The data come from the RNA Mapping Database (RMDB), libraries RFM100 and RFMREP. Chemical mapping of a 177-nucleotide RNA with DMS and 2A3.
[RMDB]
RNA sequence: GGGAACGACUCGAGUAGAGUCGAAAACAGCAGCUAGCCUGAACGGCUUGAUUCUCUCUAGAAUCAAUUGGUUUAGCUCCUGCGAUGUUGUGUUUGCAAACUCGUUCUUUUCGAGUUGGGUAGAGUUAAAUAUAAGGCGAUUCGUCGCCUUAUAUUUAAAAGAAACAACAACAACAAC
Reactivity to DMS in 0.01 (KOAc 150mM, MgCl2 10mM, bicine 150mM(pH8.5), 24C), signal-to-noise 4, nucleotides 027 to 126: c030a100g020c060a000g020c110u010a050g000c220c060u000g020a040a070c090g000g000c210u000u000g000a000u000u000c000u000c300u040c250u030a060g010a010a000u000c000a010a010u010u020g010g020u000u020u010a010g010c000u030c300c000u000g000c020g020a110u010g000u000u000g010u000g010u000u000u000g000c040a090a010a020c010u000c000g030u000u060c240u020u020u010u020c000g000a010g010u000u010g000g000g010u020a050g010a110g010u000u000
Reactivity to 2A3 in 0.01 (KOAc 150mM, MgCl2 10mM, bicine 150mM(pH8.5), 24C), signal-to-noise 2, nucleotides 027 to 126: c000a000g060c000a000g020c040u080a000g000c030c010u060g040a070a020c090g100g000c010u030u020g000a000u000u000c000u020c000u000c160u210a040g010a000a000u000c000a030a050u070u040g080g000u040u070u110a040g010c040u050c000c010u050g040c090g150a200u060g000u020u000g010u040g000u000u090u050g030c030a030a020a080c030u000c030g030u110u080c070u170u290u120u070c000g030a020g000u020u020g130g000g020u130a070g020a040g050u020u000

The RNA was probed in 150 mM KOAc, 10 mM MgCl2 and 150 mM bicine (pH 8.5) at 24 C. For DMS the reverse transcriptase was MarathonRT. The 2A3 profile rests on 915 reads. 2A3 adducts were read by reverse transcription with SuperScript II with manganese.